[RMDB]
RNA sequence: GGGAACGACUCGAGUAGAGUCGAAAAGCAGCGUGAGCGACGACACGACGAGAUCGAACGCGCGCGUCGCCGCGUGAUAGGUCUCGAUCGACCGCUGCAGAUAGGUGACGGCGCCGUCGUCGGUGCACGCUACUCCAUGAUUCGUCAUGGAGUAGCGAAAAGAAACAACAACAACAAC
Reactivity to DMS in 0.01 (KOAc 150mM, MgCl2 10mM, bicine 150mM(pH8.5), 24C), signal-to-noise 5, nucleotides 027 to 126: g000c050a050g000c010g040u020g030a150g020c020g030a010c010g000a040c020a300c030g000a050c020g000a030g010a040u000c000g010a120a240c030g010c010g020c020g010c030g010u000c160g010c180c010g020c000g000u000g010a060u010a300g010g000u000c010u000c000g010a060u000c020g010a150c210c010g010c010u010g000c010a080g000a150u000a070g010g010u010g010a120c100g000g010c030g000c080c100g020u000c020g000u000c000g010g000u000g000c020a140
Reactivity to 2A3 in 0.01 (KOAc 150mM, MgCl2 10mM, bicine 150mM(pH8.5), 24C), signal-to-noise 3, nucleotides 027 to 126: g020c020a010g000c000g070u170g120a080g060c020g030a010c020g030a000c010a000c060g060a010c010g020a000g000a020u030c020g020a150a090c020g020c000g000c000g000c010g300u170c060g010c180c000g000c000g010u010g010a050u190a130g000g000u000c000u010c010g020a080u000c000g010a020c020c000g000c020u000g000c000a000g080a100u240a030g000g220u060g000a050c040g040g000c010g010c040c060g020u060c010g000u020c000g020g020u080g030c000a010